An RNA of 177 nucleotides, treated with 2A3 and DMS and read out base by base. The 2A3 profile rests on 1,477 reads. It was measured as part of the RMDB library OK1LIB. Values are in units of 0.01, from 0 to 300, in steps of 10.
RNA sequence: GGGAACGACUCGAGUAGAGUCGAAAACAGCAGCCUUUUUGUUGAUUUCAGUUGAGUAGGCUGGUGAGAAGAUUCGAACGACCGCACUUGGAUGCGGCGCGUUACAACUGAAAUCGUCUUAACGUCGCACUACCAGGCGAUUCGUCGCCUGGUAGUGAAAAGAAACAACAACAACAAC
Reactivity to 2A3 in 0.01 (KOAc 150mM, MgCl2 10mM, bicine 150mM(pH8.5), 24C), signal-to-noise 4, nucleotides 027 to 126: c010a010g080c000a000g000c000c000u030u080u090u110u190g110u080u200g020a010u000u000u000c020a000g000u000u010g180a090g100u120a000g120g000c020u030g030g130u120g050a150g030a090a020g050a100u160u260c100g020a010a010c020g000a100c000c000g040c020a000c010u240u300g180g030a120u020g160c000g000g000c040g000c000g040u010u030a030c000a000a000c000u010g000a000a000a020u000c010g030u010c020u050u230a070a070c100g070u070c050g010
Reactivity to DMS in 0.01 (KOAc 150mM, MgCl2 10mM, bicine 150mM(pH8.5), 24C), signal-to-noise 1, nucleotides 027 to 126: c000a020g000c050a050g020c000c020u000u080u010u020u060g000u040u000g030a020u000u000u000c010a000g000u060u010g010a170g010u020a010g000g010c010u010g110g000u030g030a200g000a050a000g000a140u070u010c160g040a040a040c000g000a300c020c000g000c000a000c020u010u040g000g020a090u000g000c000g010g000c020g000c000g010u000u010a300c080a000a010c010u000g000a020a070a020u000c010g000u000c100u000u000a040a120c150g000u060c240g030